[RMDB]
RNA sequence: GGGAACGACUCGAGUAGAGUCGAAAACGAGGCGUGGGGGCUGCGGGGCCGGCCCAUCCGUGGGGGCGACUUGAGCGUUGAGGGCGCGCGGGGAGGCGAGCCACCAUGUUCAGCCAGCAGCAGCAGCCCAGCCGUCCUCAUUCGUGAGGACGGCUGGAAAAGAAACAACAACAACAAC
Reactivity to 2A3 in 0.01 (KOAc 150mM, MgCl2 10mM, bicine 150mM(pH8.5), 24C), signal-to-noise 1, nucleotides 027 to 126: c090g050a160g090g020c070g050u080g000g050g050g000g060c000u000g000c040g090g050g030g000c020c010g070g060c030c000c030a040u040c020c130g030u110g000g030g010g030g000c090g000a080c000u040u110g000a020g010c030g040u060u120g030a140g010g150g000c000g020c000g030c020g040g100g010g000a040g000g030c020g000a000g060c000c000a020c000c000a080u050g040u070u040c020a010g000c100c010a000g000c050a000g030c030a010g000c000a000g030c050